This 177-nucleotide RNA was probed chemically with 2A3 and DMS. Values are in units of 0.01, from 0 to 300, in steps of 10. DMS adducts were read by reverse transcription with MarathonRT. For 2A3, 1,859 sequencing reads were counted. Reactivities are given for positions 27 through 126.
[RMDB]
RNA sequence: GGGAACGACUCGAGUAGAGUCGAAAAGCGCCUUUGAACGGUUUUGAUUGCUCUCACUGAGUCUAUAAGAGUGUCCAAAGGUGGGGAAAAGGAAAAACUCUGCUUCAAUGUGGCCAUCAAACCUCCAUCGUUAAGCUUCAUUCGUGAAGCUUAACGAAAAAGAAACAACAACAACAAC
Reactivity to 2A3 in 0.01 (KOAc 150mM, MgCl2 10mM, bicine 150mM(pH8.5), 24C), signal-to-noise 2, nucleotides 027 to 126: g050c040g040c010c000u060u040u100g070a080a030c050g030g030u000u000u050u080g030a030u000u060g020c030u040c010u010c040a050c030u050g010a020g090u010c050u030a110u000a110a030g030a010g110u050g040u000c030c040a060a010a080g080g000u110g030g020g000g030a020a130a070a080g050g000a110a000a000a080a000c020u010c020u060g050c070u100u110c030a030a070u070g030u050g030g000c010c000a090u070c030a030a040a060c000c000u020c020c020a030
Reactivity to DMS in 0.01 (KOAc 150mM, MgCl2 10mM, bicine 150mM(pH8.5), 24C), signal-to-noise 2, nucleotides 027 to 126: g030c120g000c020c020u000u000u000g010a070a050c110g010g000u000u000u000u000g000a190u010u000g000c050u010c040u010c130a080c110u010g000a060g020u000c090u020a160u030a070a070g000a040g000u000g010u010c020c020a050a060a110g010g020u000g020g000g000g000a060a070a080a160g030g010a030a040a070a070a050c050u010c030u000g020c050u010u010c050a070a030u010g010u000g010g020c010c050a050u010c080a040a030a080c050c010u000c050c050a130